This 207-nucleotide RNA was probed chemically with 2A3 and DMS.
RNA sequence: GGGAACGACUCGAGUAGAGUCGAAAAACAUGCUGGCUAACCCAACCCCACGAUCCUCCAUCGGCAUGAUCAUGAUGUGUUCUCAAAUAUCAGGCCAGUAAAUCACCAUGCUCGUGCUGGUAAAGGCAACUUAUGCCCAAGUUCGCUUGGGCAUAAAUACUAUACUAGUAUUCGUACUAGUAUAGUAAAAAGAAACAACAACAACAAC
Reactivity to 2A3 in 0.01 (KOAc 150mM, MgCl2 10mM, bicine 150mM(pH8.5), 24C), signal-to-noise 6, nucleotides 027 to 156: a000c040a020u090g000c000u000g000g030c010u030a090a110c030c020c040a030a050c020c010c020c010a080c070g030a140u080c010c030u050c030c030a040u040c010g000g000c000a010u010g000a010u020c000a010u020g060a060u100g030u010g040u100u040c060u020c060a080a100a030u200a090u140c080a050g070g000c010c000a010g010u030a010a040a050u100c010a010c030c000a000u020g000c000u010c010g000u010g000c000u000g000g010u030a120a120a000g020g010c020a030a030c040u030u010a000u010g000c000c000c000a010a000g010u040u060c100g010c150u000u000g020g000g000c000a000u000a000a000a000
Reactivity to DMS in 0.01 (KOAc 150mM, MgCl2 10mM, bicine 150mM(pH8.5), 24C), signal-to-noise 4, nucleotides 027 to 156: a070c040a110u000g020c010u000g010g010c020u010a130a150c060c030c020a080a140c030c010c010c020a090c140g020a130u010c010c010u000c030c030a050u000c030g020g000c020a040u000g000a030u000c020a020u010g010a030u000g020u000g030u000u000c050u000c040a110a080a130u000a110u000c090a120g010g020c000c010a060g020u000a030a060a090u000c020a010c010c010a030u000g010c080u000c020g050u000g000c000u000g010g020u000a030a030a040g030g030c110a050a070c080u000u000a020u000g020c020c000c010a010a030g020u000u010c300g030c010u000u000g000g000g000c000a000u000a000a020a120
The 2A3 profile rests on 7,870 reads. Values cover nucleotides 27 to 156. For DMS the reverse transcriptase was MarathonRT.